Structure probing data (2A3 and DMS) for a 177-nucleotide construct.
[RMDB]
RNA sequence: GGGAACGACUCGAGUAGAGUCGAAAAUGCGAUUGUCGCUUCCUUUUCCUGCCUCUGAGCUCGGGAGGGGUUUCCCGCCUCGCAGCCCCCGCCCCUGGACUUGCUUCUCCUCCUCCCUCUGCGUGUGUGGGACACAGGAAUUCGUUCCUGUGUCCCAAAAAGAAACAACAACAACAAC
Reactivity to 2A3 in 0.01 (KOAc 150mM, MgCl2 10mM, bicine 150mM(pH8.5), 24C), signal-to-noise 1, nucleotides 027 to 126: u080g020c030g040a030u080u220g120u230c010g030c050u010u060c000c000u000u050u060u070c000c000u040g020c000c000u100c030u090g050a040g070c010u050c020g040g000g010a060g020g020g020g000u020u070u010c010c030c000g060c060c030u000c020g000c030a020g040c020c000c000c020c000g030c040c020c000c010u010g000g030a090c060u040u030g030c010u000u000c000u010c020c000u040c000c000u050c010c050c000u020c020u010g040c090g000u040g010u000g000
Reactivity to DMS in 0.01 (KOAc 150mM, MgCl2 10mM, bicine 150mM(pH8.5), 24C), signal-to-noise 1, nucleotides 027 to 126: u060g070c050g040a240u010u010g070u000c020g050c040u000u000c000c000u000u010u010u010c050c010u000g000c140c000u000c040u040g000a070g040c040u010c150g000g000g010a120g000g020g030g020u000u040u010c000c060c000g000c100c000u020c020g000c000a100g000c070c000c070c000c050g000c060c060c000c000u010g000g060a100c080u090u000g000c040u000u000c020u000c000c040u010c030c040u010c010c000c020u060c000u000g120c050g010u000g060u050g060

The RNA was probed in 150 mM KOAc, 10 mM MgCl2 and 150 mM bicine (pH 8.5) at 24 C. For DMS, 1,547 sequencing reads were counted.